The record gives the reactivity of an RNA of 177 nucleotides to 2A3 and DMS. The DMS profile rests on 5,323 reads. DMS adducts were read by reverse transcription with MarathonRT. The reactions ran in a buffer of 150 mM KOAc, 10 mM MgCl2 and 150 mM bicine (pH 8.5), at 24 C.
RNA sequence: GGGAACGACUCGAGUAGAGUCGAAAAGAUAUGGAUCCCGAAGGGAGUCGUAUUCGGAAACGAAUAUACGACGAAGAACUUUAAAGGAUCCUAAGUCAAAAGCACGAAGGCUUCGGCCUUCGUGCAACUAAUGUAUCUCGUUCGCGAGAUACAUUAGAAAAGAAACAACAACAACAAC
Reactivity to 2A3 in 0.01 (KOAc 150mM, MgCl2 10mM, bicine 150mM(pH8.5), 24C), signal-to-noise 2, nucleotides 027 to 126: g000a010u020a010u050g010g000a000u000c080c040c110g040a030a020g060g000g000a060g020u000c000g010u020a010u010u000c000g000g000a000a020a000c010g000a000a000u100a040u030a140c040g000a010c030g010a000a060g010a010a010c040u140u130u200a160a170a190g020g000a000u000c000c000u010a010a000g010u000c020a090a100a020a180g010c010a010c000g030a000a000g040g040c040u130u270c300g170g000c000c020u000u000c000g020u000g000c020a000a010
Reactivity to DMS in 0.01 (KOAc 150mM, MgCl2 10mM, bicine 150mM(pH8.5), 24C), signal-to-noise 3, nucleotides 027 to 126: g010a010u000a080u020g000g020a000u000c000c030c160g010a040a020g000g010g000a050g020u000c000g010u000a020u000u000c000g010g000a030a030a030c000g000a030a020u020a090u010a060c040g010a010c010g010a090a180g000a120a220c010u000u000u010a060a180a170g000g010a010u000c000c010u000a010a140g000u010c010a090a080a150a150g000c010a000c000g000a020a020g010g020c020u000u020c270g010g020c000c000u010u000c000g010u000g010c000a010a060